An RNA of 207 nucleotides, treated with 2A3 and read out base by base. For 2A3 the reverse transcriptase was SuperScript II with manganese. High 2A3 reactivity points to a flexible backbone, as in loops and unpaired stretches.
RNA sequence: GGGAACGACUCGAGUAGAGUCGAAAACGGAUGUGUAUAGAUUGGGAAACAAAAAGUUGCUAAAAACUUGAGUACACAACUCAAUAUCGUAAUUGCUCAUUUUAUAUUCUCCGAGCAUUUCAUUACAUUUGAAUAAACAAGACCAAACUUAUAUAGAACCUCAUACACACUUCGGUGUGUAUGAGGUAAAAGAAACAACAACAACAAC
Reactivity to 2A3 in 0.01 (KOAc 150mM, MgCl2 10mM, bicine 150mM(pH8.5), 24C), signal-to-noise 1, nucleotides 027 to 156: c010g000g040a120u110g000u000g010u000a000u040a060g010a010u000u040g000g000g010a100a040a060c050a000a160a220a030a030g060u070u050g000c060u160a180a080a030a080a080c000u030u030g000a000g000u100a040c220a010c030a150a040c000u030c000a010a010u000a020u180c060g030u160a010a160u040u040g000c000u000c040a020u000u000u000u000a040u000a040u070u100c020u000c040c040g000a000g070c060a040u000u040u080c020a010u030u080a130c000a140u070u100u100g040a040a020u130a070a100a030c020a000a010g010a000c010c000a000a000a040c060u250u000a110u080a010u030a300g090a070